[RMDB]
RNA sequence: GGGAACGACUCGAGUAGAGUCGAAAAUCGCGUUGGAAAACAUUAGCGACAUUUACCUGGUGAGCAAUCAGACAUGCGACGGCUUUAGCCUGGCCUCCUUAAAUUCACCUAAGAAUGGGAGCAACCACAUAUGAGGGACGUUCGCGUCCCUCAUAUGAAAAGAAACAACAACAACAAC
Reactivity to 2A3 in 0.01 (KOAc 150mM, MgCl2 10mM, bicine 150mM(pH8.5), 24C), signal-to-noise 6, nucleotides 027 to 126: u030c030g000c010g030u010u080g080g040a100a090a060a080c030a070u090u100a070g020c010g030a010c040a030u080u090u060a120c000c010u020g030g000u030g020a040g020c020a040a030u090c020a010g090a120c030a060u110g000c020g050a020c040g060g000c000u090u060u060a020g050c000c000u020g030g000c020c010u020c000c000u020u040a060a090a050u070u040c050a100c040c050u040a120a060g080a080a030u080g010g010g000a040g010c010a040a030c020c000a010
Reactivity to DMS in 0.01 (KOAc 150mM, MgCl2 10mM, bicine 150mM(pH8.5), 24C), signal-to-noise 4, nucleotides 027 to 126: u030c030g030c070g020u000u000g000g020a110a110a080a090c080a070u010u000a120g000c010g010a050c140a060u010u030u010a060c070c010u010g000g020u000g010a150g000c100a070a080u020c040a110g010a140c080a050u020g000c050g000a100c120g000g000c080u010u010u040a130g030c060c030u000g010g000c130c010u000c030c010u000u030a050a070a060u020u000c010a030c080c100u010a070a070g010a060a020u000g000g010g010a050g010c060a050a070c050c060a110
The record gives the reactivity of an RNA of 177 nucleotides to 2A3 and DMS. Conditions: 150 mM KOAc, 10 mM MgCl2 and 150 mM bicine (pH 8.5), 24 C. The 2A3 profile rests on 4,704 reads. It was measured as part of the RMDB library OK1LIB. As a SHAPE reagent, 2A3 marks flexible, mostly unpaired nucleotides at the ribose 2'-OH.